The record gives the reactivity of an RNA of 177 nucleotides to DMS and 2A3. For DMS the reverse transcriptase was MarathonRT. The reactions ran in a buffer of 150 mM KOAc, 10 mM MgCl2 and 150 mM bicine (pH 8.5), at 24 C.
[RMDB]
RNA sequence: GGGAACGACUCGAGUAGAGUCGAAAAACAUUGUACCUACAAUCCAGAUAGAUGCGUGAAUAAAGAUACUGCUUGGAUGGAGCCAUCUGAUCUCAGUAUGAUUCAGACCUGGACCAAUUUUGCAAGAACAUGAGUAGCUCUUCGGAGCUACUCAUGUAAAAGAAACAACAACAACAAC
Reactivity to DMS in 0.01 (KOAc 150mM, MgCl2 10mM, bicine 150mM(pH8.5), 24C), signal-to-noise 2, nucleotides 027 to 126: a110c070a100u020u000g000u000a070c100c030u000a070c080a110a110u010c050c050a030g020a130u000a100g000a070u050g030c080g030u030g000a050a080u010a060a090a150g030a030u010a020c050u000g000c250u010u000g000g010a050u000g000g010a100g020c090c030a050u000c010u000g000a010u000c100u010c070a060g020u000a050u000g000a060u010u000c000a010g010a120c090c060u000g010g000a190c110c060a080a060u000u000u010u000g020c080a070a090g000a120
Reactivity to 2A3 in 0.01 (KOAc 150mM, MgCl2 10mM, bicine 150mM(pH8.5), 24C), signal-to-noise 2, nucleotides 027 to 126: a000c090a000u100u130g030u080a080c000c010u000a080c010a010a030u000c020c000a020g040a090u060a100g030a050u210g080c070g030u060g060a070a040u110a080a140a020g080a050u050a060c030u020g000c010u050u050g000g000a050u030g120g000a040g050c080c010a030u000c040u040g050a100u000c040u000c070a050g040u030a040u110g090a080u080u000c040a020g070a100c010c020u070g000g010a000c050c030a090a160u140u100u090u130g020c020a070a040g040a110